[RMDB]
RNA sequence: GGGAACGACUCGAGUAGAGUCGAAAACAAACAAGAAAACGGCAGUACGGUAAAUCUGCCGAUACCGUGAGCCUGCAGCCUAAAACAAAUGGCGAACGUCAACAGGCAAGACGUUAACAAAACAAAAGAUAGGUAGCGAUUUCGAUCGCUACCUAUCAAAAGAAACAACAACAACAAC
Reactivity to DMS in 0.01 (KOAc 150mM, MgCl2 10mM, bicine 150mM(pH8.5), 24C), signal-to-noise 2, nucleotides 027 to 126: c030a010a020a080c140a050a120g000a090a000a050a200c050g000g000c000a010g020u000a060c160g000g020u020a060a030a000u000c030u010g000c000c000g020a150u000a000c130c000g010u030g000a160g080c000c010u000g000c020a080g080c010c050u010a040a000a030a020c250a110a120a050u000g000g000c020g010a110a120c110g000u010c100a020a120c090a010g000g000c050a060a090g000a050c040g000u000u100a010a110c200a070a020a060a030c100a070a030a070a060
Reactivity to 2A3 in 0.01 (KOAc 150mM, MgCl2 10mM, bicine 150mM(pH8.5), 24C), signal-to-noise 3, nucleotides 027 to 126: c050a000a040a000c000a000a140g280a080a090a000a000c020g020g000c000a030g000u160a020c040g090g040u220a080a000a120u020c010u070g000c000c030g000a000u000a010c030c030g020u000g010a000g000c020c020u110g000c030a020g010c020c000u110a090a100a060a020c120a100a050a010u090g000g000c010g070a080a000c060g180u080c020a040a030c000a110g060g000c020a030a030g080a000c020g000u020u030a100a030c090a070a040a010a000c090a060a150a000a030